[RMDB]
RNA sequence: GGGAACGACUCGAGUAGAGUCGAAAAGCGGAUAGGGUGUGGCCGCCUUCGUGGUAGGCGGUGACCUUCUUUUCUUUUUCGGAAAUCACCUUGGAGGAUCGACGUGGGCCGCCGAUCACGCGGUCGGGACCUGGUGUCGAUUCGUCGACACCAGGUCAAAAGAAACAACAACAACAAC
Reactivity to DMS in 0.01 (KOAc 150mM, MgCl2 10mM, bicine 150mM(pH8.5), 24C), signal-to-noise 1, nucleotides 027 to 126: g000c210g020g000a050u000a060g040g000g020u000g030u010g020g010c000c000g010c000c010u000u000c150g010u020g020g020u000a040g030g020c010g000g020u010g010a030c040c030u000u000c030u000u000u000u000c030u000u000u000u020u010c100g020g000a080a100a140u000c040a050c040c080u000u010g000g010a140g010g000a070u000c030g020a090c110g040u000g010g020g020c000c010g020c010c020g020a030u010c030a110c240g020c230g000g020u010c010g000g000
Reactivity to 2A3 in 0.01 (KOAc 150mM, MgCl2 10mM, bicine 150mM(pH8.5), 24C), signal-to-noise 1, nucleotides 027 to 126: g140c080g000g050a040u130a070g060g040g010u070g060u060g150g090c030c000g030c100c040u050u120c020g130u120g080g090u030a010g000g000c000g000g020u020g040a020c020c000u090u030c010u010u100u010u020c000u030u040u000u070u130c010g050g080a070a050a210u200c120a120c020c030u020u070g040g020a020g030g000a020u030c000g000a080c030g020u140g000g030g010c000c010g000c020c000g020a040u030c000a010c070g090c040g020g000u060c000g000g070